[RMDB]
RNA sequence: GGGAACGACUCGAGUAGAGUCGAAAACUUUUCUUCCUGCUUCAGAAUAAAUCCUCAUUGAUUCAAUACAGGGAGUGUGCUUCUUCUCUGAAAGCUGGUGACUGAAUCAAAAGAGCUUUAGCAUAUAUAGUAACAAAACAUUCGUGUUUUGUUACUAAAAAGAAACAACAACAACAAC
Reactivity to DMS in 0.01 (KOAc 150mM, MgCl2 10mM, bicine 150mM(pH8.5), 24C), signal-to-noise 4, nucleotides 027 to 126: c080u010u000u010u010c040u000u000c020c010u000g020c040u000u000c090a140g010a130a120u010a050a080a060u010c080c030u000c100a160u010u000g000a050u000u010c020a060a090u010a120c030a030g000g000g000a030g010u010g020u000g000c050u010u000c020u000u000c020u010c020u010g000a090a070a080g020c040u010g010g010u000g000a100c090u010g010a030a060u000c030a020a050a110a090g000a050g010c300u000u000u000a040g000c030a040u000a100u010a120
Reactivity to 2A3 in 0.01 (KOAc 150mM, MgCl2 10mM, bicine 150mM(pH8.5), 24C), signal-to-noise 3, nucleotides 027 to 126: c000u100u100u100u020c000u060u050c000c010u020g030c010u050u060c050a050g060a180a060u100a190a120a050u120c030c010u030c030a060u040u120g030a040u100u050c020a030a050u090a160c020a020g000g080g000a020g030u080g020u040g050c050u040u090c010u030u010c060u000c010u020g130a170a080a060g050c070u070g040g050u030g040a090c020u020g030a020a020u040c000a050a010a100a000g040a010g010c000u060u090u060a020g000c040a000u040a010u030a000